[RMDB]
RNA sequence: GGGAACGACUCGAGUAGAGUCGAAAAGAUCCCUCUUAGCGUGGAGGUUUAACUACGCUCGUUCCCCAUAUCGGUGUGGGCGCACCGGAUUUAUAAAUCAAAGUCCUUUAGGGAACGGAAAGGAACAAAAAUCCAUGGGAGUUCGCUCCCAUGGAAACAUUCCAACUUGGUUCGCCAAGUUGGAAUGAAAAGAAACAACAACAACAAC
Reactivity to DMS in 0.01 (KOAc 150mM, MgCl2 10mM, bicine 150mM(pH8.5), 24C), signal-to-noise 2, nucleotides 027 to 156: g000a300u010c050c000c020u020c040u000u000a050g000c020g110u030g030g000a060g030g030u020u000u000a090a050c000u000a010c010g000c000u000c010g000u010u010c000c000c000c040a180u000a080u000c050g020g020u000g020u000g000g000g000c040g040c000a020c000c000g030g000a210u010u020u000a060u020a090a070a070u000c080a030a100a080g030u000c000c020u010u040u000a100g000g010g000a050a100c040g010g000a040a040a080g000g020a050a090c000a010a070a030a170a210u000c010c010a040u000g020g000g030a080g010u000u000c300g020c020u000c000c000c000a000u000g000g000a010a010a110
Reactivity to 2A3 in 0.01 (KOAc 150mM, MgCl2 10mM, bicine 150mM(pH8.5), 24C), signal-to-noise 1, nucleotides 027 to 156: g060a050u040c000c000c020u000c010u010u030a000g010c010g000u000g000g010a030g010g030u070u160u100a040a030c020u030a000c000g000c000u000c000g020u010u010c000c000c010c010a030u130a070u090c030g000g010u000g000u030g000g020g000c050g020c030a000c000c010g000g000a000u010u240u030a220u100a100a030a000u050c110a020a020a000g020u030c000c000u030u030u060a020g000g000g000a030a020c040g030g000a080a050a010g070g000a070a010c040a050a070a070a010a010u000c000c000a000u010g000g000g030a040g010u060u110c100g040c050u000c010c000c010a000u000g000g000a000a000a000
About this RNA: This 207-nucleotide RNA was probed chemically with DMS and 2A3. Source: RMDB library M2RFPK, as collected in RNAgym.